[RMDB]
RNA sequence: GGGAACGACUCGAGUAGAGUCGAAAAGAUAUGGACCAUAUAAACUACUCACGACAGACAUGCCUACAUAUCGGAAACGAUAUUGAGGCAACAGCUGUCGUGAGUAGUUUAUACUGGUCCUAAGUCAGAAUGACGUAUAGUUCGCUAUACGUCAUUCAAAAGAAACAACAACAACAAC
Reactivity to DMS in 0.01 (KOAc 150mM, MgCl2 10mM, bicine 150mM(pH8.5), 24C), signal-to-noise 5, nucleotides 027 to 126: g010a050u010a300u010g010g010a010c000c010a060u010a000u000a010a010a010c000u000a010c000u000c000a010c000g000a030c000a020g000a060c140a300u010g010c010c000u000a130c100a020u000a000u000c000g010g000a190a090a210c010g010a020u000a010u000u000g020a070g000g030c000a010a040c300a160g010c010u000g000u000c000g010u000g000a000g010u000a000g000u000u000u000a000u010a000c300u000g020g000u000c000c000u000a000a060g000u000c060a120
An RNA of 177 nucleotides, treated with DMS and read out base by base.
The data come from the RNA Mapping Database (RMDB), library TTRINS.